[RMDB]
Chemical mapping of a 207-nucleotide RNA with DMS and 2A3. The RNA was probed in 150 mM KOAc, 10 mM MgCl2 and 150 mM bicine (pH 8.5) at 24 C. 2A3 is a SHAPE reagent: it acylates the 2'-hydroxyl of flexible nucleotides of all four kinds.
RNA sequence: GGGAACGACUCGAGUAGAGUCGAAAAGUAGGAUAGUGACUUGAUUCAUGGUGUGAGUCUGUAGUCCAGUGAGCCCUUUCUCUGGGUCUCUGCUCUUUGGGAGAGUUCAAGCCCCAUUUGCCCUAUGUCCUAGGGAAGUUGCACGCGGGCCACUGGAAAUUAGGUAUCAGUUCGCUGAUACCUAAUUAAAAGAAACAACAACAACAAC
Reactivity to DMS in 0.01 (KOAc 150mM, MgCl2 10mM, bicine 150mM(pH8.5), 24C), signal-to-noise 3, nucleotides 027 to 156: g020u010a080g000g010a080u000a070g030u000g010a070c060u000u010g010a090u000u000c080a100u000g020g030u010g020u000g000a030g020u000c000u000g010u010a100g020u000c010c010a090g010u000g000a210g000c000c010c010u000u000u000c050u000c040u000g000g020g020u000c040u000c030u000g020c020u000c030u000u000u000g030g000g000a140g010a120g000u010u010c130a110a200g010c020c010c000c030a120u010u040u000g020c010c020c020u010a100u010g010u000c050c040u000a050g010g000g010a020a090g010u010u000g020c070a130c200g030c100g010g020g040c010c010a030c010u020g010g000a020
Reactivity to 2A3 in 0.01 (KOAc 150mM, MgCl2 10mM, bicine 150mM(pH8.5), 24C), signal-to-noise 3, nucleotides 027 to 156: g050u050a030g020g070a090u030a060g060u060g110a080c050u070u080g030a030u170u080c050a070u120g090g030u110g030u050g040a030g040u030c040u070g100u110a060g090u020c000c010a000g000u000g010a040g000c000c000c000u010u090u020c040u000c030u030g000g000g000u000c000u020c010u040g010c000u020c040u080u100u100g050g060g010a120g020a040g090u090u200c090a110a020g020c010c010c000c010a020u050u040u070g040c050c000c000u030a050u180g050u050c020c020u000a000g000g000g020a010a030g030u120u180g110c110a070c140g130c080g020g000g000c000c000a000c000u000g000g000a000